[RMDB]
RNA sequence: GGGAACGACUCGAGUAGAGUCGAAAAGAUGUAUAACGCACUCUACAUUAGUGGAAUACGAUAAUUUGCUUUCAGUCGAUGGACAGUAAAGUUAUUGUUACGCUUAAUCUCAAUGGUAGCUUGAGUGCUAUACAUAACUCUGACACUAAUGUGAAUGUGACUCCAUCAUGUUCGCAUGAUGGAGUCAAAAAGAAACAACAACAACAAC
Reactivity to 2A3 in 0.01 (KOAc 150mM, MgCl2 10mM, bicine 150mM(pH8.5), 24C), signal-to-noise 3, nucleotides 027 to 156: g110a010u030g050u010a020u000a150a070c040g000c000a000c030u030c050u080a050c030a040u050u030a020g000u010g000g210a200a110u120a070c000g000a000u010a020a000u060u000u000g000c000u020u050u140c020a090g130u140c070g260a190u130g120g000a020c080a060g000u030a010a080a000g020u000u000a020u010u030g000u010u090a000c030g010c050u040u050a050a030u140c000u050c130a080a210u100g080g080u120a110g040c130u040u110g040a020g020u010g000c030u010a000u000a010c000a030u030a080a050c020u060c030u140g160a020c020a020c090u140a130a140u250g060u060g200a220a090u180g020
Structure probing data (2A3) for a 207-nucleotide construct.
For 2A3 the reverse transcriptase was SuperScript II with manganese.